[RMDB]
RNA sequence: GGGAACGACUCGAGUAGAGUCGAAAACAGACAGGAGGAAGUGUGUACUCACACCAGCCAGGAGGAAACAAGCCUGCCUGGGAGGACAGACGAUCAGCCCUGGCUGUCCCUCAGGAGCGGGGGGCCUGAGACGUUUCCAGUUCGCUGGAAACGUCUCAAAAGAAACAACAACAACAAC
Reactivity to 2A3 in 0.01 (KOAc 150mM, MgCl2 10mM, bicine 150mM(pH8.5), 24C), signal-to-noise 1, nucleotides 027 to 126: c000a010g010a020c020a020g000g030a010g020g080a160a000g050u090g020u000g030u100a010c010u020c040a050c010a070c050c000a000g040c010c000a010g000g040a010g000g120a080a160a130c040a150a000g080c000c010u030g050c010c000u010g030g000g000a050g010g010a020c000a000g050a000c010g020a060u160c020a060g050c000c000c000u000g040g010c000u010g040u060c000c010c000u000c040a110g000g130a070g050c060g000g000g010g000g000g000c000c060u050